[RMDB]
RNA sequence: GGGAACGACUCGAGUAGAGUCGAAAAAGACCCACGCUACGGCGUGGAUCACACGUUCAUCCCUAUUGGGACGGAAGUAGGCAUAGUGCCGAAGGAACGCAUUAGUCAUGCGCUACGGCGCAUGACACACAUCAGAGUCACUUCGGUGACUCUGAAAGCGUUUAUUAAUCUUCGGAUUAAUAAACGCAAAAGAAACAACAACAACAAC
Reactivity to 2A3 in 0.01 (KOAc 150mM, MgCl2 10mM, bicine 150mM(pH8.5), 24C), signal-to-noise 6, nucleotides 027 to 156: a000g040a020c000c000c000a010c000g020c000u020a030c290g160g000c000g010u000g000g010a010u020c010a050c000a010c060g010u030u010c010a020u050c010c000c000u130a300u140u300g010g000g000a020c020g010g010a030a020g000u020a010g020g000c020a060u090a290g150u190g140c000c000g000a010a000g030g020a000a000c010g000c040a060u060u170a040g000u000c000a000u010g000c010g000c000u020a030c250g110g000c010g000c000a000u000g000a000c000a000c010a000c000a050u060c010a000g000a000g000u000c000a000c010u030u070c150g080g000u000g000a000c000u010c000u000g000a010a000a000
Reactivity to DMS in 0.01 (KOAc 150mM, MgCl2 10mM, bicine 150mM(pH8.5), 24C), signal-to-noise 2, nucleotides 027 to 156: a090g000a030c000c020c000a020c000g020c020u000a050c280g170g110c080g080u000g030g000a000u000c000a150c080a090c060g030u000u000c030a210u000c000c010c010u000a220u000u000g010g030g050a020c010g010g000a050a090g000u000a100g030g020c030a160u040a150g050u000g020c000c040g020a140a140g020g030a060a070c080g000c090a100u010u010a110g020u000c050a020u000g000c000g050c000u000a070c280g080g040c000g000c010a030u000g000a010c000a040c090a060c070a250u010c010a020g000a050g020u000c020a000c000u000u000c250g070g010u000g020a010c000u000c000u000g000a010a020a130

This 207-nucleotide RNA was probed chemically with 2A3 and DMS. For 2A3, 4,955 sequencing reads were counted. For DMS, 2,726 sequencing reads were counted. Reactivities are given for positions 27 through 156.